[RMDB]
RNA sequence: GGGAACGACUCGAGUAGAGUCGAAAAUUUAUGAAACAUUGUGAAAGAAUGAAAGUUUUUUCACAUACUCUCUUAAAACCCAUGUUUUCAAUGAGGAAUUUGUGGUAAUAACUGGAGAGGCUACGUAUCAUAAUGGCUACUUCGGUAGCCAUUAUGAAAAAGAAACAACAACAACAAC
Reactivity to DMS in 0.01 (KOAc 150mM, MgCl2 10mM, bicine 150mM(pH8.5), 24C), signal-to-noise 1, nucleotides 027 to 126: u010u010u020a050u020g000a160a020a050c110a020u020u010g030u020g010a000a010a010g000a010a000u010g010a100a120a140g020u010u000u000u000u000u000c000a010c010a020u000a150c060u000c020u020c000u010u000a010a080a120a090c220c010c000a050u000g010u000u000u000u010c020a130a120u000g000a210g000g010a040a000u000u000u000g040u020g000g000u010a080a040u000a060a070c270u000g000g010a030g040a030g000g000c150u010a070c260g000u000a080
Reactivity to 2A3 in 0.01 (KOAc 150mM, MgCl2 10mM, bicine 150mM(pH8.5), 24C), signal-to-noise 1, nucleotides 027 to 126: u000u000u060a170u070g020a030a180a040c030a120u050u040g000u000g000a000a010a000g040a020a010u060g050a010a040a080g000u000u000u000u010u030u020c000a000c000a000u030a060c000u060c010u000c010u020u010a000a020a060a090c000c000c020a000u020g050u000u000u020u080c170a220a210u280g060a130g280g020a050a030u040u000u120g070u100g070g000u000a110a040u090a170a100c070u060g040g010a000g000a010g000g020c030u080a020c050g120u090a030

Structure probing data (DMS and 2A3) for a 177-nucleotide construct. For DMS, 918 sequencing reads were counted. Conditions: 150 mM KOAc, 10 mM MgCl2 and 150 mM bicine (pH 8.5), 24 C. High 2A3 reactivity points to a flexible backbone, as in loops and unpaired stretches. For DMS the reverse transcriptase was MarathonRT. 2A3 adducts were read by reverse transcription with SuperScript II with manganese.